[RMDB]
RNA sequence: GGGAACGACUCGAGUAGAGUCGAAAAGGGGUCGGACGCGAAACCUUAGAUACGCAUCGAUCGUUACUGAAGCCUCCACGGUAACGGGAGCGUGCUAAGGGAGUCCGACGGAGGCACCCAAAACAUCCAACCAUUGGUUCGCCAAUGGUUGGAUGAACACUAUUGCCCCGUUCGCGGGGCAAUAGUGAAAAGAAACAACAACAACAAC
Reactivity to 2A3 in 0.01 (KOAc 150mM, MgCl2 10mM, bicine 150mM(pH8.5), 24C), signal-to-noise 1, nucleotides 027 to 156: g050g000g110g040u020c010g000g000a010c020g040c100g110a130a080a030c010c010u030u020a070g030a180u090a090c000g020c010a060u300c080g000a000u010c000g010u020u000a000c000u040g040a080a020g010c000c000u020c000c000a010c000g000g020u000a000a000c030g000g000g000a030g000c010g000u020g000c000u020a000a000g000g020g010a010g010u000c010c000g000a000c000g000g000a000g010g000c000a030c000c000c010a040a060a000a040c010a000u010c000c000a000a010c000c000a020u000u020g000g050u050u040c300g050c160c000a000a010u010g000g010u030u010g000g000a000u000g000a000a010
An RNA of 207 nucleotides, treated with 2A3 and read out base by base. Reactivities are given for positions 27 through 156. It was measured as part of the RMDB library RNAMAK.